Annotation
This 177-nucleotide RNA was probed chemically with 2A3 and DMS. For DMS, 1,349 sequencing reads were counted. For 2A3, 3,190 sequencing reads were counted. For 2A3 the reverse transcriptase was SuperScript II with manganese. The reactions ran in a buffer of 150 mM KOAc, 10 mM MgCl2 and 150 mM bicine (pH 8.5), at 24 C. It was measured as part of the RMDB library TTRDES.
RNA sequence: GGGAACGACUCGAGUAGAGUCGAAAAGAUAUGGAGUAAUCUGACACGUCGAAGAACGAGCUCGGAAACGAGCUCGGGAGACGAAUGUCAGAGUUACUCCUAAGUCAAACGGAGGUUCGCCUCCGAAGCCAAGGUAAAUGUUCGCAUUUACCUUGGCAAAAGAAACAACAACAACAAC
Reactivity to 2A3 in 0.01 (KOAc 150mM, MgCl2 10mM, bicine 150mM(pH8.5), 24C), signal-to-noise 2, nucleotides 027 to 126: g040a040u090a060u200g000g010a000g000u030a020a040u040c000u000g000a010c010a030c150g030u030c020g260a300a070g000a050a020c000g000a000g000c010u010c000g060g020a070a140a110c020g000a000g000c010u000c000g010g000g010a030g000a000c010g080a220a150u100g010u000c000a000g000a010g010u030u000a000c000u000c000c000u000a050a010g000u010c040a100a040a060c020g000g010a010g020g000u110u150c280g170c030c000u000c020c000g010a040a030
Reactivity to DMS in 0.01 (KOAc 150mM, MgCl2 10mM, bicine 150mM(pH8.5), 24C), signal-to-noise 2, nucleotides 027 to 126: g000a050u020a300u050g000g000a030g040u000a000a000u010c050u000g000a000c010a070c050g000u000c010g010a040a170g020a300a300c000g000a010g010c000u000c000g030g000a120a120a250c000g050a010g000c000u020c000g000g000g000a150g010a000c000g020a100a060u010g010u000c000a010g010a040g010u000u000a010c000u010c010c000u020a000a120g000u000c090a070a080a260c080g020g000a020g020g010u000u000c260g000c040c000u010c030c000g040a060a120